[RMDB]
RNA sequence: GGGAACGACUCGAGUAGAGUCGAAAAGAUAUGGAGUGUGAAAGCCGAAUAGGUGGCGUUGAAAUCGGAAACGAUGGAGCCACUAUUCGAGGGUCACUCCUAAGUCAAAGUCUGGUUCGCCAGACAAGGUUAGUUUACGGUUCGCCGUAAACUAACCAAAAGAAACAACAACAACAAC
Reactivity to 2A3 in 0.01 (KOAc 150mM, MgCl2 10mM, bicine 150mM(pH8.5), 24C), signal-to-noise 2, nucleotides 027 to 126: g010a010u030a030u250g030g000a050g000u010g000u050g250a250a080a030g070c070c020g040a030a020u100a120g300g040u070g030g000c030g040u300u030g000a000a030a000u000c020g040g000a090a020a050c000g000a000u010g010g010a000g010c000c000a000c010u020a000u000u010c000g020a150g040g110g000u150c000a000c000u000c020c000u020a110a040g020u020c070a170a050a010g010u020c000u010g030g020u030u090c160g070c100c000a000g000a020c010a000a010
Reactivity to DMS in 0.01 (KOAc 150mM, MgCl2 10mM, bicine 150mM(pH8.5), 24C), signal-to-noise 2, nucleotides 027 to 126: g000a000u010a300u010g000g000a030g020u000g060u000g010a060a080a300g000c050c000g020a000a020u000a030g030g010u010g000g000c020g000u010u000g010a050a120a010u000c010g000g000a150a070a170c000g000a000u000g000g000a080g010c000c000a030c010u000a000u000u000c000g010a110g020g000g000u020c030a020c000u010c000c000u000a050a100g010u000c060a140a110a090g000u000c010u000g000g000u000u030c270g030c000c000a010g000a000c000a050a080
Conditions: 150 mM KOAc, 10 mM MgCl2 and 150 mM bicine (pH 8.5), 24 C. Chemical mapping of a 177-nucleotide RNA with 2A3 and DMS. The DMS profile rests on 1,320 reads. In probing experiments dimethyl sulfate is read out at A N1 and C N3, which are open when not base-paired. Values are in units of 0.01, from 0 to 300, in steps of 10.